[RMDB]
RNA sequence: GGGAACGACUCGAGUAGAGUCGAAAAGGAGGAUUCCGCUCCUUUGCGCUUUUUUUUCGCAUUAGGCGUGGAGGCGAAAGUCACCCUCCUCGCAUCGCAAGUUCGUGCUUGCGACUUACACGUAGGGAAAAACCCAUUGACUUCGGUCAAUGGGUAAACUAGUAAGCAUGUUCGCAUGCUUACUAGUAAAAGAAACAACAACAACAAC
Reactivity to 2A3 in 0.01 (KOAc 150mM, MgCl2 10mM, bicine 150mM(pH8.5), 24C), signal-to-noise 6, nucleotides 027 to 156: g020g000a010g020g030a140u090u050c030c020g000c040u030c020c010u010u010u020g020c030g020c040u150u030u030u020u030u020u080u130c140g020c080a100u130u110a060g030g000c010g010u010g000g010a000g010g010c050g080a220a050a020g060u080c040a060c020c000c010u000c010c000u000c020g070c020a020u020c000g000c000a000a020g010u160u270c120g180u300g080c010u000u000g010c000g020a020c010u070u120a040c070a020c110g160u150a120g020g020g030a020a080a030a030a020c000c000c000a000u000u000g000a000c000u010u120c260g050g000u000c000a000a000u000g000g010g000u010a000a000
Reactivity to DMS in 0.01 (KOAc 150mM, MgCl2 10mM, bicine 150mM(pH8.5), 24C), signal-to-noise 4, nucleotides 027 to 156: g010g010a040g000g010a270u010u000c040c030g010c050u000c010c000u000u010u000g020c010g020c020u000u000u000u000u000u000u000u000c170g020c100a090u000u000a030g010g020c010g050u000g000g010a030g010g000c060g010a060a050a060g010u000c050a100c080c000c010u010c000c000u000c030g020c270a060u000c010g010c000a010a020g030u000u010c270g020u010g000c020u000u000g000c010g010a030c050u000u000a110c090a040c070g010u000a050g020g010g000a040a040a040a080a100c000c000c000a010u000u000g010a030c000u000u000c280g040g010u000c010a010a010u000g000g020g010u010a000a000